[RMDB]
RNA sequence: GGGAACGACUCGAGUAGAGUCGAAAAGGGUAACCGAAAGGGGUCACUGUUGAUGAAGCAAUGUGCUUUUUGGUGGACAUCUUUAUAUGUACAACCAGAAGCAGAUCCUAAAAUUUGUUAUCAUGGCAUGUUUGGAAUUGAUUUGCGUGUAUAUCGCAGAUAUCGCUGUGUUCGCACAGCGAUAUCUAAAAGAAACAACAACAACAAC
Reactivity to 2A3 in 0.01 (KOAc 150mM, MgCl2 10mM, bicine 150mM(pH8.5), 24C), signal-to-noise 1, nucleotides 027 to 156: g040g030g010u050a080a030c000c160g080a050a000a060g050g000g000g010u050c020a030c120u000g000u100u060g090a130u040g070a040a020g060c010a050a100u080g020u070g070c010u140u060u020u120u060g030g000u050g000g050a000c020a000u020c030u060u270u130a170u090a030u140g010u030a030c010a190a090c000c000a000g000a000a000g000c010a000g030a030u050c000c040u080a030a050a050a190u090u140u010g010u000u010a050u060c050a040u050g030g000c100a130u050g090u070u070u090g000g050a080a080u070u100g030a060u080u080u170g020c020g040u060g060u080a060u050a070u300c000g000c040
The record gives the reactivity of an RNA of 207 nucleotides to 2A3. Reactivities are given for positions 27 through 156. It was measured as part of the RMDB library OK3TST. The reactions ran in a buffer of 150 mM KOAc, 10 mM MgCl2 and 150 mM bicine (pH 8.5), at 24 C. For 2A3, 654 sequencing reads were counted.